[RMDB]
RNA sequence: GGGAACGACUCGAGUAGAGUCGAAAAAGCAGGAGUACGCUCCUGCAUGGGUAGACGAAUUGACCCCAACUGAAGUUCAAUUCUAACGUUAAAAGGAGUUUUAUAUGACCGGACGUACGCGUCCAGAUGACGAUUUCAUUCUUCGGAAUGAAAUCAACGAUGUAUACCCGUUCGCGGGUAUACAUCGAAAAGAAACAACAACAACAAC
Reactivity to 2A3 in 0.01 (KOAc 150mM, MgCl2 10mM, bicine 150mM(pH8.5), 24C), signal-to-noise 1, nucleotides 027 to 156: a020g030c000a000g030g020a000g000u050a060c180g000c090u000c000c000u010g010c000a010u030g010g000g040u270a190g080a280c080g000a060a000u000u040g000a000c000c000c000c040a020a090c140u230g090a000a000g020u120u020c010a000a000u010u000c020u050a080a050c040g090u060u190a110a070a000a040g130g000a080g030u030u100u060u050a200u010a110u130g080a060c050c050g000g000a000c010g020u110a010c190g020c030g160u000c000c000a000g020a020u040g060a060c140g000a000u030u000u000c000a010u020u000c000u030u050c110g050g000a000a000u020g000a000a010a000u000c000a030a010